Structure probing data (DMS and 2A3) for a 207-nucleotide construct. The reactions ran in a buffer of 150 mM KOAc, 10 mM MgCl2 and 150 mM bicine (pH 8.5), at 24 C.

RNA sequence: GGGAACGACUCGAGUAGAGUCGAAAAAGUCAGAGGGCGCUACCAUGCGAACUAGGGCUGGCUACUCUUGCACAGAAUCACAUCUCGAUAAUUGUCAGUGCAAGAAGGACAAUUAUACCAUUUAAUGAAAACGUUUACCUGUUCGCAGGUAAACGAACCAUUUCCUUAUCUUCGGAUAAGGAAAUGGAAAAGAAACAACAACAACAAC
Reactivity to DMS in 0.01 (KOAc 150mM, MgCl2 10mM, bicine 150mM(pH8.5), 24C), signal-to-noise 3, nucleotides 027 to 156: a090g020u000c010a090g010a040g000g000g010c050g010c020u000a100c140c120a160u040g020c050g000a050a100c030u010a120g030g030g030c040u020g020g020c050u010a160c000u000c000u020u010g020c000a040c000a100g000a180a170u010c100a080c110a180u000c060u000c100g000a100u000a050a010u010u000g030u000c010a300g020u000g020c000a050a030g000a070a070g020g010a070c020a030a080u000u000a030u000a100c140c010a100u000u000u000a130a090u010g000a130a100a090a180c010g020u000u000u000a010c000c010u030g010u000u000c290g040c000a020g010g030u020a000a000a010c000g020a000a060
Reactivity to 2A3 in 0.01 (KOAc 150mM, MgCl2 10mM, bicine 150mM(pH8.5), 24C), signal-to-noise 8, nucleotides 027 to 156: a000g010u010c000a000g010a030g040g020g010c010g000c020u120a280c100c090a110u270g010c000g010a030a040c010u050a040g040g080g030c010u010g020g000c010u080a080c010u010c000u010u000g000c000a000c000a020g130a100a080u170c040a050c020a220u050c050u050c090g070a030u010a020a010u020u000g010u000c000a000g000u000g010c000a010a000g010a010a010g010g000a000c000a010a000u020u010a020u040a090c050c060a120u140u170u250a180a120u180g110a060a050a020a020c000g000u010u000u000a000c000c000u010g020u030u060c210g000c040a000g000g000u010a000a000a000c000g000a000a010